Notes
Structure probing data (2A3 and DMS) for a 207-nucleotide construct. It was measured as part of the RMDB library OK3TST. Conditions: 150 mM KOAc, 10 mM MgCl2 and 150 mM bicine (pH 8.5), 24 C. The 2A3 profile rests on 1,411 reads.

RNA sequence: GGGAACGACUCGAGUAGAGUCGAAAAUGUGCUCAAAAGGCUGUGAGACCUUGUGAAAGUAACCUAACUUCUCUGAGCCACUUUCCCCACUAGUAACAUACAGAUAAUAGUGUAGUUUCCAUUUCACAGGGUCAUUAUGGGGAUUAAAUAACAGCAACAUAUCCCCGAUCUUCGGAUCGGGGAUAUGAAAAGAAACAACAACAACAAC
Reactivity to 2A3 in 0.01 (KOAc 150mM, MgCl2 10mM, bicine 150mM(pH8.5), 24C), signal-to-noise 3, nucleotides 027 to 156: u110g010u020g000c010u000c040a060a050a030a050g050g000c000u000g010u010g020a040g010a020c000c000u000u000g010u010g010a030a030a040g050u060a060a060c060c040u050a060a120c080u100u040c050u040c030u090g020a000g050c010c030a010c010u020u000u000c000c010c040c000a030c020u050a040g090u150a130a000c020a130u210a050c040a050g120a060u100a210a040u090a130g030u040g030u030a060g040u010u090u040c070c050a090u040u040u000c000a000c000a000g000g010g000u000c000a020u090u040a030u070g020g000g010g010a010u060u220a100a050a020u080a080a010c010a000g020c010a020a020
Reactivity to DMS in 0.01 (KOAc 150mM, MgCl2 10mM, bicine 150mM(pH8.5), 24C), signal-to-noise 1, nucleotides 027 to 156: u000g050u000g050c030u000c040a030a120a120a060g000g020c050u000g000u010g000a170g000a050c000c030u000u000g010u000g010a020a040a080g000u010a070a050c100c030u000a050a030c040u010u000c080u000c030u000g010a030g010c030c010a040c050u020u010u020c010c010c020c050a090c070u010a050g040u000a070a100c100a190u010a300c090a090g010a160u000a110a120u000a080g020u000g000u020a080g010u000u000u000c020c030a160u000u000u000c020a020c000a020g000g020g000u000c010a050u010u000a060u010g000g020g020g000a140u000u010a050a040a100u000a100a070c020a040g000c000a050a220